[RMDB]
RNA sequence: GGGAACGACUCGAGUAGAGUCGAAAAGCGCGGCACGCGCAGGUCCACAUCCGCCAGCAGCGUCUUGGCGCGCAGCUCGUAGUGCGUGUCCCCACCGCCGCCCUCGCGGCUGCUGGCCGGGGGCAGCGGGUCGAUUAGGUUUCGACCUAAUCGACCCAAAAGAAACAACAACAACAAC
Reactivity to 2A3 in 0.01 (KOAc 150mM, MgCl2 10mM, bicine 150mM(pH8.5), 24C), signal-to-noise 4, nucleotides 027 to 126: g030c010g010c030g090g040c120a050c080g010c020g020c010a020g030g090u050c040c030a060c020a180u050c030c030g000c010c000a020g010c000a010g010c030g070u040c110u130u150g050g020c020g010c020g000c040a040g000c020u060c110g150u180a050g040u020g080c020g000u020g060u070c000c040c000c010a050c020c010g000c000c010g000c000c000c000u030c040g050c060g080g000c020u030g040c030u060g010g000c030c040g010g000g000g000g000c000a000g010c020
Reactivity to DMS in 0.01 (KOAc 150mM, MgCl2 10mM, bicine 150mM(pH8.5), 24C), signal-to-noise 1, nucleotides 027 to 126: g020c110g030c050g000g000c040a080c140g000c030g020c050a060g000g000u030c010c000a130c100a110u040c110c000g000c020c010a030g000c040a020g030c040g030u030c080u060u000g020g000c020g000c000g000c090a080g070c010u000c020g020u060a040g060u010g000c040g000u000g000u000c010c000c000c060a130c130c020g000c000c000g070c010c000c000u000c100g000c060g000g070c010u000g000c070u020g000g040c000c050g010g000g000g000g000c030a010g040c030